[RMDB]
RNA sequence: GGGAACGACUCGAGUAGAGUCGAAAACUAUGCAGAUUCGUCUGCAUAGAGACCCGAUGAAGCGGCACUUAGACAGCUUCAUACACGUAAGAAGUGCAAUAAAGGGACGAGGGUUCGCCCUCGUCAAGGGCUGCUAUGAAUUCGUUCAUAGCAGCCCAAAAGAAACAACAACAACAAC
Reactivity to 2A3 in 0.01 (KOAc 150mM, MgCl2 10mM, bicine 150mM(pH8.5), 24C), signal-to-noise 1, nucleotides 027 to 126: c000u010a010u000g030c000a000g010a040u000u110c060g120u010c050u030g000c000a000u000a000g000a000g040a040c000c000c000g000a020u020g020a000a000g020c050g050g010c070a010c040u030u000a030g060a090c020a040g040c020u000u010c000a030u010a040c160a000c070g100u060a000a070g040a100a000g050u040g000c010a000a050u240a190a110a040g150g030g020a000c010g000a000g080g000g000u020u120c190g130c010c000c000u000c040g000u000c000a000a000